Source: RMDB library OK2TRN, as collected in RNAgym. Structure probing data (2A3 and DMS) for a 177-nucleotide construct. The DMS profile rests on 2,298 reads. The reactions ran in a buffer of 150 mM KOAc, 10 mM MgCl2 and 150 mM bicine (pH 8.5), at 24 C. For DMS the reverse transcriptase was MarathonRT.

RNA sequence: GGGAACGACUCGAGUAGAGUCGAAAAAUAUUGAUAAGGAGCAGUACCACGAUGCCGGCCAAUGGCACAAGCACAAUCUUGGUGAUGCUAUAGACCCAAGAGGUACGGUCGCGACUGGCUUCGGCGAGUAACAGAAGCGAUUCGUCGCUUCUGUUACAAAAGAAACAACAACAACAAC
Reactivity to 2A3 in 0.01 (KOAc 150mM, MgCl2 10mM, bicine 150mM(pH8.5), 24C), signal-to-noise 2, nucleotides 027 to 126: a010u110a030u060u110g040a050u080a220a110g040g000a060g000c020a010g030u050a070c000c030a030c070g040a050u130g080c090c010g000g010c020c040a020a130u060g100g000c050a030c060a140a020g010c030a060c030a090a180u040c000u050u050g070g000u070g040a050u040g010c010u100a100u060a290g070a030c000c010c010a000a000g020a010g030g010u060a060c050g000g000u060c040g000c030g050a050c020u050g000g000c000u070u080c030g040g010c030g030a070
Reactivity to DMS in 0.01 (KOAc 150mM, MgCl2 10mM, bicine 150mM(pH8.5), 24C), signal-to-noise 3, nucleotides 027 to 126: a080u020a080u000u010g010a120u020a140a110g010g000a130g000c030a040g020u000a040c040c020a090c120g000a090u000g010c010c050g000g000c010c030a060a060u010g010g000c020a060c080a080a090g000c040a030c050a060a130u000c020u000u000g010g000u000g000a090u000g000c220u000a130u020a060g010a230c300c000c030a030a040g000a060g010g010u000a020c070g000g000u000c130g020c050g010a030c030u000g010g000c020u000u000c050g010g010c030g010a120